[RMDB]
This 177-nucleotide RNA was probed chemically with DMS and 2A3. The DMS profile rests on 4,282 reads. The 2A3 profile rests on 10,796 reads. The reactions ran in a buffer of 150 mM KOAc, 10 mM MgCl2 and 150 mM bicine (pH 8.5), at 24 C. It was measured as part of the RMDB library TTRDEL.

RNA sequence: GGGAACGACUCGAGUAGAGUCGAAAAGAUAUGGAAUUCGUGGUGACAUGCUGAAUCGGAAACGAUCAGCAACAGCACCGAAUUCCUAAGUCAAACGUAGAUGCGGAGUUCGCUCCGCAUCUACGAAGUCCAAAAAUAGGUUCGCCUAUUUUUGGACAAAAGAAACAACAACAACAAC
Reactivity to DMS in 0.01 (KOAc 150mM, MgCl2 10mM, bicine 150mM(pH8.5), 24C), signal-to-noise 4, nucleotides 027 to 126: g010a010u000a290u010g000g000a010a000u000u000c010g030u010g020g000u000g010a190c130a190u010g010c000u010g010a040a060u000c000g010g010a060a060a110c010g010a000u000c000a000g000c010a020a020c300a130g010c010a010c050c020g010a020a010u000u000c000c000u000a010a080g010u000c000a080a130a260c000g020u000a000g010a010u000g010c020g010g000a010g000u000u010c290g000c010u000c000c000g000c000a000u000c000u000a000c000g000a020a050
Reactivity to 2A3 in 0.01 (KOAc 150mM, MgCl2 10mM, bicine 150mM(pH8.5), 24C), signal-to-noise 4, nucleotides 027 to 126: g000a000u040a010u090g010g010a000a000u020u020c050g070u200g260g140u050g110a200c080a120u030g020c000u010g040a300a250u050c000g000g020a020a030a010c010g000a000u000c000a010g040c020a000a010c090a020g070c010a000c000c010g000a000a010u010u000c000c000u000a030a000g010u010c050a110a050a070c020g000u000a000g000a010u010g020c000g000g000a010g000u070u140c150g090c110u000c000c000g000c000a000u000c000u000a010c000g000a010a010